RNA sequence: GGGAACGACUCGAGUAGAGUCGAAAAAAUGCAGAUAGUAAGUGUUUAUAAACAUUACAUUGAAAUACGCAAACAUCAUCAGCUGCCAUACUUGCGUAAUUGGCAUCUCUAAGCACAUAACCUUGUAUGUCGUUAUCGGCAUAUUUGUAUGCUAUAGGAAUUGACAUCGGUUCGCCGAUGUCAAUUCAAAAGAAACAACAACAACAAC
Reactivity to 2A3 in 0.01 (KOAc 150mM, MgCl2 10mM, bicine 150mM(pH8.5), 24C), signal-to-noise 1, nucleotides 027 to 156: a000a000u170g040c000a040g060a090u150a060g030u050a070a050g100u000g080u000u220u130a300u080a030a110a000c000a000u000u080a010c050a030u040u000g070a090a080a030u010a020c040g000c010a180a000a000c040a110u160c000a020u020c020a010g120c040u040g000c080c000a070u040a120c060u050u060g000c020g040u020a040a130u020u040g040g040c000a040u020c030u000c000u060a020a020g020c040a000c000a050u140a110a000c030c050u040u040g000u100a000u000g030u010c000g090u110u220a180u300c000g000g000c000a000u000a040u000u000u060g070u000a020u040g000c050u040a030u050a230g070
Chemical mapping of a 207-nucleotide RNA with 2A3.
It was measured as part of the RMDB library OK3TST.